[RMDB]
The data come from the RNA Mapping Database (RMDB), libraries RFM100 and RFMREP. This 177-nucleotide RNA was probed chemically with DMS and 2A3. The RNA was probed in 150 mM KOAc, 10 mM MgCl2 and 150 mM bicine (pH 8.5) at 24 C. Reactivities are rounded to 0.1 and cut off at 0 and 3. As a SHAPE reagent, 2A3 marks flexible, mostly unpaired nucleotides at the ribose 2'-OH.

RNA sequence: GGGAACGACUCGAGUAGAGUCGAAAACUGCAAUGGUUUCGACGGGGCAUGAGGAGGGUGACUGAAGCCUGCUCGGUCAGAGCGAACCCGUAACAGCGAACAACAUCGUUCGUUUCUCCCGUCAAGCUAACAUUUCUGAAUUCGUUCAGAAAUGUUAAAAAGAAACAACAACAACAAC
Reactivity to DMS in 0.01 (KOAc 150mM, MgCl2 10mM, bicine 150mM(pH8.5), 24C), signal-to-noise 9, nucleotides 027 to 126: c030u000g010c150a110a070u030g010g010u000u000u000c050g010a020c010g010g000g010g010c190a080u020g010a110g010g010a220g010g000g010u000g010a110c130u010g010a060a120g000c030c030u010g010c020u010c040g010g010u010c100a120g000a070g010c040g010a100a050c010c000c010g000u020a090a100c200a090g000c000g000a020a020c020a110a160c220a130u030c170g010u000u000c020g000u000u010u000c050u010c000c000c000g000u000c020a100a070g010c080
Reactivity to 2A3 in 0.01 (KOAc 150mM, MgCl2 10mM, bicine 150mM(pH8.5), 24C), signal-to-noise 9, nucleotides 027 to 126: c030u060g020c050a070a170u150g060g000u010u020u040c030g000a000c010g010g010g010g060c130a100u230g040a060g060g090a060g020g010g010u050g070a050c060u120g060a080a010g020c000c010u020g020c030u040c040g060g070u300c070a010g020a010g020c030g020a030a030c010c000c000g030u080a080a030c030a060g000c000g010a000a010c010a010a070c020a210u190c110g010u010u000c000g010u010u040u000c020u010c000c000c000g010u010c010a010a000g000c010